[RMDB]
RNA sequence: GGGAACGACUCGAGUAGAGUCGAAAAACCUUUGUGGUGUAACUAUCGCACUAAGACAGUCACACGUUCGCCCAUUGGGCGAACAGUGUGACAAUGACGGUGCGACGAAUUACACCACUCUGGUAAAUCUCCGGCUUUCUUCGGAAAGCCGGAGAAACAUCAAUGGUCUCUUCGGAGACCAUUGAUGAAAAGAAACAACAACAACAAC
Reactivity to 2A3 in 0.01 (KOAc 150mM, MgCl2 10mM, bicine 150mM(pH8.5), 24C), signal-to-noise 1, nucleotides 027 to 156: a000c030c020u050u050u040g000u000g010g000u020g000u000a030a020c070u040a040u000c000g010c000a000c010u060a120a050g130a090c050a120g220u010c000a000c000a000c040g010u010u030c000g020c020c000c110a300u140u300g010g000g000c000g000a000a000c010a030g010u000g010u040g010a010c000a010a010u010g000a010c120g010g010u000g000c040g020a000c000g050a230a300u030u020a010c000a000c030c000a000c000u000c000u040g010g000u000a070a120a050u000c000u030c000c010g010g020c000u000u000u000c010u010u060c080g080g000a000a000a000g000c000c070g000g010a000g000a000a000a000